RNA sequence: GGGAACGACUCGAGUAGAGUCGAAAACGUGGCCUUGUCCAUCUGCAGCGUGGAGAUGCCUGACAUCAUCAUCAAGGCGCUGCCUGUUCUGGUGGUGAAGCUCACGCACAUCUCAGCCACAGCCAGACCUGCAUCAUCGUUUCGACGAUGAUGCAGGAAAAGAAACAACAACAACAAC
Reactivity to 2A3 in 0.01 (KOAc 150mM, MgCl2 10mM, bicine 150mM(pH8.5), 24C), signal-to-noise 3, nucleotides 027 to 126: c050g030u020g020g000c050c030u050u080g110u080c020c020a070u040c050u120g040c040a050g000c040g080u060g060g000a040g010a020u030g010c020c040u070g050a080c010a120u110c020a010u040c000a000u020c020a060a070g090g010c140g000c170u100g000c010c020u040g030u180u130c050u060g020g000u010g000g000u040g060a030a020g000c030u030c010a010c020g050c010a030c020a100u000c010u000c060a020g050c030c020a050c010a040g060c030c000a050g000a100
Reactivity to DMS in 0.01 (KOAc 150mM, MgCl2 10mM, bicine 150mM(pH8.5), 24C), signal-to-noise 3, nucleotides 027 to 126: c100g060u010g010g030c040c050u010u000g000u040c050c020a050u000c050u000g000c060a040g010c070g020u000g020g020a170g030a090u010g000c080c090u000g010a070c100a200u030c040a030u000c000a060u000c070a050a200g000g000c030g010c140u000g010c030c060u010g000u000u010c250u010g030g010u000g000g020u000g010a060a040g010c090u000c080a020c220g030c070a050c110a070u000c000u000c020a100g000c020c020a070c040a140g000c020c020a140g000a150